[RMDB]
RNA sequence: GGGAACGACUCGAGUAGAGUCGAAAAACAUGGCGGUGACAUACACCGGAAAACCGUAGAGAUACGGUCCGCCUUGUAGUCGGUGUACAGGUGGUGCAAGCCUGUCGUCAGGUAGUGUCGUGCGCUGAGUUAAAUUGUAAUUCGUUACAAUUUAACUAAAAGAAACAACAACAACAAC
Reactivity to DMS in 0.01 (KOAc 150mM, MgCl2 10mM, bicine 150mM(pH8.5), 24C), signal-to-noise 2, nucleotides 027 to 126: a080c060a060u020g010g010c010g000g000u000g000a070c070a030u010a040c050a030c020c020g000g000a010a070a080a060c000c010g010u000a000g000a210g000a220u010a010c000g010g000u010c010c030g000c050c030u020u010g020u030a040g010u000c010g010g000u000g000u000a060c030a030g000g000u000g000g020u020g000c140a120a200g000c020c000u000g010u000c040g010u000c070a300g000g000u000a300g000u000g000u000c070g000u000g000c120g000c100u000g000
Reactivity to 2A3 in 0.01 (KOAc 150mM, MgCl2 10mM, bicine 150mM(pH8.5), 24C), signal-to-noise 2, nucleotides 027 to 126: a000c030a040u050g040g010c010g000g030u060g000a010c000a020u080a050c020a050c000c000g000g000a060a090a000a000c000c000g000u000a000g010a000g000a060u000a020c000g000g000u010c010c020g000c010c000u020u120g060u040a040g050u050c010g000g000u040g000u030a050c010a020g000g000u020g030g060u140g120c040a040a030g020c000c000u010g010u010c020g030u030c040a000g000g020u050a050g040u000g000u060c050g000u080g070c000g000c030u050g000